[RMDB]
RNA sequence: GGGAACGACUCGAGUAGAGUCGAAAAGUCCGCAGCCACGCACACCGCGCGGCUGACAGGGGUGACCUCCCUGGUGCUAGCGGUGGCACAUUGACCGCGUGGGCCCCGCUGGCGUUUCGCCGGCGCCCCACCAGAAACUAUUCGUAGUUUCUGGUGGAAAAGAAACAACAACAACAAC
Reactivity to 2A3 in 0.01 (KOAc 150mM, MgCl2 10mM, bicine 150mM(pH8.5), 24C), signal-to-noise 9, nucleotides 027 to 126: g080u030c030c010g020c030a020g030c020c010a040c030g030c010a100c020a040c090c040g030c000g030c160g050g000c000u000g000a010c000a000g010g010g000g020u150g080a110c010c020u080c000c000c000u040g030g040u060g010c000u020a020g000c010g020g010u080g050g030c020a020c010a090u130u290g100a130c050c050g030c010g010u030g010g010g000c000c000c020c000g000c000u000g000g010c010g020u070u090u160c090g000c000c000g010g000c000g000c020c000
Reactivity to DMS in 0.01 (KOAc 150mM, MgCl2 10mM, bicine 150mM(pH8.5), 24C), signal-to-noise 4, nucleotides 027 to 126: g000u010c000c020g020c050a080g020c000c010a040c080g010c010a260c130a070c140c100g000c010g010c100g000g000c010u000g000a060c040a010g020g010g000g010u020g000a090c180c100u060c030c010c000u000g000g010u010g010c000u010a180g000c010g000g010u030g000g000c030a090c080a080u020u030g000a060c060c060g030c010g060u030g000g000g000c010c000c040c000g010c000u000g010g020c020g020u000u030u030c050g050c010c020g000g000c000g000c120c080